[RMDB]
RNA sequence: GGGAACGACUCGAGUAGAGUCGAAAAGAUAUGGAACGUGAUGGAGCUCAACAGCAGGGAAUUUCUACCACCUCGGAAACGAGGUGGUAGAAAUUCCCUGACAUGAGCGCCAUACGUUCCUAAGUCACAAUGCAUUAAUCUUCGGAUUAAUGCAUUGAAAAGAAACAACAACAACAAC
Reactivity to DMS in 0.01 (KOAc 150mM, MgCl2 10mM, bicine 150mM(pH8.5), 24C), signal-to-noise 2, nucleotides 027 to 126: g020a060u000a300u000g000g010a010a010c000g000u010g010a010u000g000g000a050g010c010u010c000a060a080c260a220g020c010a000g000g000g020a030a010u000u000u000c010u000a010c000c010a020c000c010u000c000g010g000a110a070a260c000g040a020g010g030u010g000g010u000a000g000a000a010a000u000u000c000c000c010u000g000a000c020a190u000g000a020g010c000g000c000c000a000u000a010c000g010u000u000c000c000u000a020a080g010u010c050a230